[RMDB]
RNA sequence: GGGAACGACUCGAGUAGAGUCGAAAAGAAAACAAGUACCGAGAACAUUGUUUUCGCUGCUUGGCGUUGCCGUUUUGUGUUGCAGUUGGUUGGGUAACGCCGCAAAUACCAACAGAAGAGACAGAUAAGUAAAUCAUCAUUUCGAUGAUGAUUUACUAAAAGAAACAACAACAACAAC
Reactivity to DMS in 0.01 (KOAc 150mM, MgCl2 10mM, bicine 150mM(pH8.5), 24C), signal-to-noise 6, nucleotides 027 to 126: g020a090a030a070a120c030a030a030g010u010a030c290c040g000a050g030a040a030c030a190u010u030g020u000u000u000u010c000g000c140u020g020c000u000u000g000g000c060g000u000u000g000c010c010g020u010u010u020u030g020u010g020u010u010g000c110a140g000u010u000g010g000u000u000g000g010g000u010a060a080c300g000c010c020g000c080a040a070a090u040a060c020c000a010a010c030a100g010a080a100g000a130g010a130c100a080g000a110u030a040
Reactivity to 2A3 in 0.01 (KOAc 150mM, MgCl2 10mM, bicine 150mM(pH8.5), 24C), signal-to-noise 3, nucleotides 027 to 126: g030a010a020a000a010c020a010a000g040u040a070c050c100g070a030g010a070a030c100a290u110u210g000u010u000u000u010c010g010c020u010g000c020u020u120g000g000c000g000u000u000g010c010c020g080u050u030u150u140g160u040g050u060u110g040c070a080g010u050u060g070g000u040u110g070g010g000u000a030a020c020g010c010c000g000c010a030a040a000u160a030c000c020a010a020c010a030g110a160a010g060a040g040a040c050a040g090a100u140a160